[RMDB]
RNA sequence: GGGAACGACUCGAGUAGAGUCGAAAAGGACCCCACUCCUGCGAGACAGGAGUAAUCCUAAACAGGGUUUUCACCCUUCCUUUAGUUUCCUUCCUCUCCUGGAGAGGUCUUCUGCCCUAGCCCGGUCGAAACACUAUAACUUCGGUUAUAGUGUUUCAAAAGAAACAACAACAACAAC
Reactivity to 2A3 in 0.01 (KOAc 150mM, MgCl2 10mM, bicine 150mM(pH8.5), 24C), signal-to-noise 4, nucleotides 027 to 126: g010g010a010c010c000c010c010a070c000u000c010c000u020g000c120g070a040g010a060c190a110g010g000a000g000u000a000a020u020c000c010u040a050a020a050c300a160g050g010g000u070u060u240u300c120a050c000c010c000u000u020c000c000u010u020u010a010g000u010u040u010c010c000u030u040c000c000u020c000u000c010c010u020g020g010a020g000a010g010g000u000c010u020u010c020u050g010c020c000c010u030a060g020c010c010c020g060g070u090c090
Reactivity to DMS in 0.01 (KOAc 150mM, MgCl2 10mM, bicine 150mM(pH8.5), 24C), signal-to-noise 5, nucleotides 027 to 126: g010g000a030c010c020c060c230a080c010u000c000c000u000g010c130g000a070g010a100c130a010g000g000a010g000u000a020a030u000c160c020u000a010a020a020c190a010g000g010g010u000u000u010u000c200a090c000c000c000u000u000c030c010u000u000u000a030g000u000u000u000c010c010u000u000c030c030u000c010u000c000c040u010g010g000a040g000a100g010g000u000c010u000u000c060u010g010c010c010c010u000a120g010c030c010c040g010g020u010c160